[RMDB]
RNA sequence: GGGAACGACUCGAGUAGAGUCGAAAAGAUAAGCUAGCAGCAAAAAGGAACCGAUUCCCACCAAGGUCGGAAAGAGAUACCGGGCGAGGCGCUGAAGAAAGAAUCUCGCUUCAGACACCCCAAGGACAUGACCUUAAAAUGUUCGCAUUUUAAGGAACGUACUGUCAUUGUUCGCAAUGACAGUACGAAAAGAAACAACAACAACAAC
Reactivity to DMS in 0.01 (KOAc 150mM, MgCl2 10mM, bicine 150mM(pH8.5), 24C), signal-to-noise 1, nucleotides 027 to 156: g020a090u000a010a190g010c030u000a150g050c030a160g030c070a020a140a070a090a100g000g000a050a140c010c020g010a170u000u000c000c000c020a140c050c020a080a090g010g010u010c050g060g000a060a090a120g040a050g000a130u010a110c000c000g030g010g040c030g000a120g000g020c180g010c000u060g020a030a110g010a110a020a060g000a170a050u000c030u000c070g000c030u000u030c020a130g000a270c020a070c040c000c010c010a000a150g030g000a070c030a090u000g030a130c000c000u020u000a010a010a000a010u010g020u020u030c300g020c000a040u000u000u000u000a050a060g010g000a010a110
Reactivity to 2A3 in 0.01 (KOAc 150mM, MgCl2 10mM, bicine 150mM(pH8.5), 24C), signal-to-noise 2, nucleotides 027 to 156: g020a110u100a070a100g010c020u040a030g050c070a000g020c010a040a070a040a050a040g110g000a040a040c000c030g020a050u070u130c030c020c010a020c020c020a080a040g000g000u040c020g050g060a120a090a020g090a020g000a020u100a100c020c020g010g000g000c050g020a030g010g060c060g000c090u060g000a030a020g020a020a140a030g040a050a100u040c070u050c100g020c000u040u040c010a010g020a020c000a070c030c020c000c020a030a090g060g000a010c030a090u120g070a050c000c000u000u000a000a020a000a000u000g030u020u040c140g010c100a000u020u000u000u010a000a000g000g010a060a000